[RMDB]
RNA sequence: GGGAACGACUCGAGUAGAGUCGAAAAAUGACAGUCUUAAGAAUACACAGUUUAUGGCCUAACGAUUUGUGUGUCCUGAAAGAUGGUGGCCAUAAUUAGGAGCAGUUUGUGUUUUACUUCCACCAGAGGCCUGAUGUAGAUUCGUCUACAUCAGGCCAAAAGAAACAACAACAACAAC
Reactivity to DMS in 0.01 (KOAc 150mM, MgCl2 10mM, bicine 150mM(pH8.5), 24C), signal-to-noise 1, nucleotides 027 to 126: a040u000g010a140c100a130g010u000c020u010u010a170a030g000a080a080u000a060c030a040c030a060g020u010u000u000a070u020g000g000c070c050u010a050a090c160g000a070u000u010u010g000u000g020u000g000u010c020c040u000g000a120a110a020g000a020u000g010g020u000g020g000c030c050a050u030a020a040u000u000a060g000g010a080g030c070a050g000u000u000u000g000u030g000u020u000u000u010a050c100u000u000c050c050a050c160c070a130g010a210
An RNA of 177 nucleotides, treated with DMS and read out base by base.
The RNA was probed in 150 mM KOAc, 10 mM MgCl2 and 150 mM bicine (pH 8.5) at 24 C.
It was measured as part of the RMDB library OK2TST.